[RMDB]
An RNA of 207 nucleotides, treated with DMS and 2A3 and read out base by base. It was measured as part of the RMDB library OK3TST. 2A3 adducts were read by reverse transcription with SuperScript II with manganese.
RNA sequence: GGGAACGACUCGAGUAGAGUCGAAAAGCCAGGUACGUGAACUUGUACGGAGCCUCCGUCUGCACCAUUCCCCAGUGCUGCCGCCAAACCAGCUGGAUCGUCUUCGGGACGUCGGUGUCGCAGUCCAGCCCUGCGGACAAGCGCGCUUGGGGAGGGAGGUAAUAUACGAUUUCGAUCGUAUAUUACCAAAAGAAACAACAACAACAAC
Reactivity to DMS in 0.01 (KOAc 150mM, MgCl2 10mM, bicine 150mM(pH8.5), 24C), signal-to-noise 2, nucleotides 027 to 156: g000c030c020a080g020g030u000a020c080g000u010g000a070a090c040u000u000g020u000a100c070g000g010a100g020c030c010u000c020c000g000u000c040u020g010c030a100c020c010a110u000u010c010c000c000c010a090g020u000g010c020u000g040c010c050g000c020c050a060a120a100c070c140a090g000c000u000g010g010a030u010c040g000u000c050u000u000c130g010g030g020a050c040g020u000c120g050g030u000g020u010c040g030c060a170g030u000c010c000a040g010c030c050c060u000g000c090g000g010a100c020a060a090g020c040g000c020g020c050u000u000g000g010g000g000a020g010g010g010a100
Reactivity to 2A3 in 0.01 (KOAc 150mM, MgCl2 10mM, bicine 150mM(pH8.5), 24C), signal-to-noise 6, nucleotides 027 to 156: g060c020c030a030g030g040u080a040c060g060u090g090a200a070c070u120u110g030u110a020c020g030g020a040g040c010c020u040c020c020g060u030c030u060g030c050a040c030c010a120u050u070c000c000c000c000a000g010u010g020c020u040g000c000c010g000c040c060a120a130a080c020c030a010g010c000u010g000g010a030u070c020g050u010c060u160u080c070g110g040g070a090c070g080u210c050g060g060u120g010u070c040g010c100a030g050u010c010c000a000g010c010c000c020u030g000c010g000g040a100c050a080a040g010c020g000c000g000c060u120u160g000g000g000g010a010g010g010g000a040